[RMDB]
RNA sequence: GGGAACGACUCGAGUAGAGUCGAAAACACGCAAAGAUUAUUUUUAACGCCAUCUUGCAUGUCUUUGUUACCGCCUUUACCAAUGCCAGCGAUUUUGCCAUCUUUAAUACCAAUAUCCGCUUUAUAACAUACGUUAUCGGUUCGCCGAUAACGUAUGAAAAGAAACAACAACAACAAC
Reactivity to DMS in 0.01 (KOAc 150mM, MgCl2 10mM, bicine 150mM(pH8.5), 24C), signal-to-noise 3, nucleotides 027 to 126: c050a090c150g020c040a030a050a070g010a070u010u030a040u020u000u010u000u000a090a100c160g010c110c080a020u000c030u000u000g010c030a080u000g010u000c040u010u000u000g000u000u000a100c030c020g000c030c040u000u010u010a100c060c050a030a090u000g000c040c020a020g010c080g010a080u000u000u000u020g000c030c020a040u000c030u010u000u010a050a070u010a100c050c020a080a050u000a050u010c050c050g010c100u000u000u000a060u010a100a190
Reactivity to 2A3 in 0.01 (KOAc 150mM, MgCl2 10mM, bicine 150mM(pH8.5), 24C), signal-to-noise 3, nucleotides 027 to 126: c020a010c030g050c030a050a060a010g040a070u030u060a090u100u300u060u130u110a120a050c030g020c040c010a050u010c030u040u080g010c030a040u050g020u000c020u000u040u040g050u060u040a050c020c020g010c020c000u060u060u040a030c020c010a060a030u060g030c000c000a010g000c020g040a020u080u030u040u040g020c010c000a010u030c020u030u110u030a110a080u070a080c000c020a040a030u030a050u140c020c010g050c080u110u070u080a210u050a050a030
Structure probing data (DMS and 2A3) for a 177-nucleotide construct. The data come from the RNA Mapping Database (RMDB), library RFMREP. Conditions: 150 mM KOAc, 10 mM MgCl2 and 150 mM bicine (pH 8.5), 24 C. Values cover nucleotides 27 to 126. For 2A3 the reverse transcriptase was SuperScript II with manganese.